An RNA of 207 nucleotides, treated with DMS and 2A3 and read out base by base.
The reactions ran in a buffer of 150 mM KOAc, 10 mM MgCl2 and 150 mM bicine (pH 8.5), at 24 C.
High DMS reactivity at an A or C suggests that its Watson-Crick edge is free.
Reactivities are given for positions 27 through 156.

RNA sequence: GGGAACGACUCGAGUAGAGUCGAAAAGGACCUGCUGAGGGGUCCGACAUAGCCUCAGCGUCUAGCCUGUCACUCACCAGGCGAAUCAUGUGAGUGUUGAUGCUUUUGCAUCUUAAUCUGACUGAGUCGUAGCAGUCUCAUGAACUAUGACUUUAGAGCAUAGUGAUAGGUUCGCCUAUCACUAUGCAAAAGAAACAACAACAACAAC
Reactivity to DMS in 0.01 (KOAc 150mM, MgCl2 10mM, bicine 150mM(pH8.5), 24C), signal-to-noise 2, nucleotides 027 to 156: g010g010a030c010c030u000g040c080u000g010a120g020g020g040g040u000c060c070g020a070c130a150u000a220g000c040c010u000c040a070g010c040g030u000c070u000a100g030c000c000u050g020u010c030a060c020u000c020a030c040c010a060g030g000c010g000a060a080u000c210a060u010g000u000g000a040g040u000g000u000u020g000a120u000g020c010u010u010u000u010g040c000a110u000c030u000u010a070a240u010c090u000g000a160c030u000g010a050g020u000c020g030u000a010g000c020a070g030u010c160u010c180a150u000g000a140a080c010u000a020u000g000a050c010u000u010u000a050g000a230
Reactivity to 2A3 in 0.01 (KOAc 150mM, MgCl2 10mM, bicine 150mM(pH8.5), 24C), signal-to-noise 5, nucleotides 027 to 156: g000g000a010c000c020u040g010c000u000g010a000g000g000g000g000u000c000c010g000a010c010a090u170a020g050c010c000u000c010a000g000c000g040u060c080u080a020g000c000c000u010g050u080c010a000c010u000c000a000c000c000a000g000g030c050g030a040a060u130c060a040u070g000u000g010a000g000u000g000u040u090g000a000u000g000c050u080u180u210u300g000c010a000u010c000u010u110a120a090u100c120u140g010a010c000u000g000a010g010u000c000g010u010a010g010c020a010g020u010c090u080c170a120u190g080a070a040c000u010a000u020g010a010c000u060u050u090a090g020a020
For 2A3 the reverse transcriptase was SuperScript II with manganese.